Background: Structure probing data (2A3) for a 207-nucleotide construct. 2A3 adducts were read by reverse transcription with SuperScript II with manganese. The reactions ran in a buffer of 150 mM KOAc, 10 mM MgCl2 and 150 mM bicine (pH 8.5), at 24 C.

[RMDB]
RNA sequence: GGGAACGACUCGAGUAGAGUCGAAAAGUUUUGUGCGCUCAUUUUUUUCCUCCUAGAUGGCAGAGGAUCAAAGCUCACAGUCAAAAGAUGGAAAAGAUGCAGCGGCGACUUCUGAAGCUAAUGUUAUAACAUUUGAUGGAGAGGCUUCUUAUUUAAAAUUCGAUACACAAUUCGUUGUGUAUCGAAUAAAAGAAACAACAACAACAAC
Reactivity to 2A3 in 0.01 (KOAc 150mM, MgCl2 10mM, bicine 150mM(pH8.5), 24C), signal-to-noise 1, nucleotides 027 to 156: g000u040u090u150u160g010u060g120c040g000c000u000c020a000u040u040u080u000u000u000u000c040c000u070c010c010u040a060g000a120u030g010g000c090a000g010a050g140g040a100u240c120a040a140a050g030c000u010c010a020c090a020g060u000c010a000a060a000a000g020a030u120g030g000a000a000a000a000g010a010u020g010c140a000g020c010g000g020c040g000a000c000u220u140c080u220g020a030a020g000c020u070a060a000u090g030u140u180a160u070a270a050c040a020u120u070u220g070a040u130g000g070a070g040a020g000g070c040u040u000c000u020u220a260u110u230u180a040a280a040